[RMDB]
This 177-nucleotide RNA was probed chemically with DMS and 2A3.
For DMS the reverse transcriptase was MarathonRT.
The 2A3 profile rests on 433 reads.
RNA sequence: GGGAACGACUCGAGUAGAGUCGAAAACGACGGUCGUGAAUCGUCGUGGUGCCGUAGGGAAGCCGCGAAGCGGGCCACUUGGGAAGUACGGCCGCAAGGCUGAAACUUAAAGGAAUUGGCGGGGGAGUGCACGUUACAACUUCGGUUGUAACGUGCAAAAAGAAACAACAACAACAAC
Reactivity to DMS in 0.01 (KOAc 150mM, MgCl2 10mM, bicine 150mM(pH8.5), 24C), signal-to-noise 1, nucleotides 027 to 126: c040g000a010c030g000g000u000c090g030u000g040a070a000u010c000g000u000c030g080u000g000g080u000g030c000c010g000u000a060g000g000g050a080a070g060c040c080g000c020g000a170a120g040c050g000g000g020c020c000a040c120u000u040g000g000g000a080a080g020u000a120c010g040g000c040c000g060c180a100a150g000g010c010u000g000a090a130a030c020u000u010a040a180a080g000g000a060a170u110u020g030g040c010g000g040g000g040g000a080g080
Reactivity to 2A3 in 0.01 (KOAc 150mM, MgCl2 10mM, bicine 150mM(pH8.5), 24C), signal-to-noise 1, nucleotides 027 to 126: c030g000a000c000g000g000u020c020g300u170g270a210a020u010c000g000u000c020g000u000g000g000u090g050c010c000g090u060a010g050g100g030a010a010g090c000c000g060c150g020a110a000g020c000g000g000g000c000c000a000c000u040u030g100g000g050a010a030g060u000a000c030g070g000c000c000g070c050a140a000g000g000c000u040g000a000a020a000c000u150u100a240a000a060g180g030a070a070u080u030g000g000c060g000g110g000g000g000a040g050

For 2A3 the reverse transcriptase was SuperScript II with manganese.